This 177-nucleotide RNA was probed chemically with DMS.
[RMDB]
RNA sequence: GGGAACGACUCGAGUAGAGUCGAAAAUGGACCAGAAGCCAAGGAUCUCUCUAGUGAUGGUCAGAGGGCCCAAAUGGCAGGGAUACCCAGUGAUGUCAGGAGGAAUAGUACAGACAGAAGGUGCUAACUGAUCAAGCAGGUUCGCCUGCUUGAUCAGAAAAGAAACAACAACAACAAC
Reactivity to DMS in 0.01 (KOAc 150mM, MgCl2 10mM, bicine 150mM(pH8.5), 24C), signal-to-noise 1, nucleotides 027 to 126: u010g010g030a110c020c030a060g060a170a060g020c030c020a100a130g000g000a040u000c060u010c010u000c020u020a120g000u000g000a090u000g030g010u020c090a080g000a050g020g020g030c170c010c030a020a070a130u000g010g000c050a090g000g000g050a110u000a170c000c000c060a150g000u000g010a080u000g070u010c030a050g000g000a090g000g010a110a020u000a040g000u050a080c070a110g020a100c040a040g000a070a160g000g010u010g000c020u000a080a140
Annotation
DMS (dimethyl sulfate) methylates the pairing face of unpaired adenines and cytosines. DMS adducts were read by reverse transcription with MarathonRT. The RNA was probed in 150 mM KOAc, 10 mM MgCl2 and 150 mM bicine (pH 8.5) at 24 C. It was measured as part of the RMDB library OK2TST.